[RMDB]
RNA sequence: GGGAACGACUCGAGUAGAGUCGAAAAGAAAGGGACCCCUGCCAGGGGACGCAGCCAGUCGAACCCAGGCAUGUUUUUGCAUGCCCGACUGACCCCUGCUGCGGGCAGGAGGGGUGGUCCCGAAAGAAAUAAUGCAGUCAUUCGUGACUGCAUUAUUAAAAGAAACAACAACAACAAC
Reactivity to DMS in 0.01 (KOAc 150mM, MgCl2 10mM, bicine 150mM(pH8.5), 24C), signal-to-noise 4, nucleotides 027 to 126: g020a100a130a160g000g010g000a060c010c020c060c010u000g030c010c020a110g020g000g000g010a230c030g000c030a020g010c040c030a030g010u000c010g000a090a200c020c020c040a220g010g010c000a000u000g000u000u000u020u010u010g020c010a020u000g010c000c000c000g000a020c010u010g000a300c040c020c000c030u000g010c020u000g020c050g010g000g030c030a020g000g000a050g000g000g020g000u010g020g010u000c000c000c000g000a040a080a130g010a130
Reactivity to 2A3 in 0.01 (KOAc 150mM, MgCl2 10mM, bicine 150mM(pH8.5), 24C), signal-to-noise 2, nucleotides 027 to 126: g010a080a070a020g010g000g010a000c010c020c000c000u000g040c010c020a040g110g000g000g000a010c020g000c000a000g030c000c000a010g010u010c010g020a160a170c000c020c010a000g010g000c000a010u020g130u000u260u110u210u300g020c000a000u000g000c000c060c000g000a000c000u010g040a050c010c020c000c020u020g030c000u000g000c000g010g020g000c030a010g020g040a050g080g060g000g030u030g000g000u020c000c000c000g020a010a020a000g020a000